[RMDB]
RNA sequence: GGGAACGACUCGAGUAGAGUCGAAAACGAACUUCGCACGGCCGACGAGUCGAUCAGCGAGAGCAGAACCUGCGGCGCCACCGGGUCAUAGAGGGCGUCGAAGCCGGUGUGGUCGUCGGCGGAGCCGAAUAAUAGUUUUAUUCGUAAAACUAUUAUUAAAAGAAACAACAACAACAAC
Reactivity to DMS in 0.01 (KOAc 150mM, MgCl2 10mM, bicine 150mM(pH8.5), 24C), signal-to-noise 9, nucleotides 027 to 126: c060g010a120a120c120u020u010c060g020c010a150c050g000g010c010c010g010a070c040g000a080g010u020c040g000a120u020c090a110g010c010g000a130g010a160g020c040a110g000a110a090c060c010u010g010c010g000g000c010g020c010c010a050c030c020g000g000g010u030c130a110u030a110g010a110g000g000g010c010g010u000c030g010a060a100g000c040c050g000g010u010g010u030g010g010u000c010g010u000c030g000g000c010g010g010a090g010c060c100g000
Reactivity to 2A3 in 0.01 (KOAc 150mM, MgCl2 10mM, bicine 150mM(pH8.5), 24C), signal-to-noise 9, nucleotides 027 to 126: c020g040a040a030c030u070u050c020g010c050a060c050g100g000c030c010g080a100c030g010a040g110u120c030g060a130u110c050a020g060c020g050a080g020a020g110c050a020g020a070a040c000c010u030g010c010g010g000c010g010c010c000a100c030c020g100g000g040u070c030a020u090a090g160a150g040g060g000c020g010u020c020g040a030a010g020c020c030g020g000u060g020u040g040g050u020c010g000u010c020g030g000c000g010g010a020g020c020c020g010
The record gives the reactivity of an RNA of 177 nucleotides to DMS and 2A3. 2A3 adducts were read by reverse transcription with SuperScript II with manganese. Values cover nucleotides 27 to 126. The data come from the RNA Mapping Database (RMDB), library OK1LIB. The 2A3 profile rests on 26,609 reads. The reactions ran in a buffer of 150 mM KOAc, 10 mM MgCl2 and 150 mM bicine (pH 8.5), at 24 C.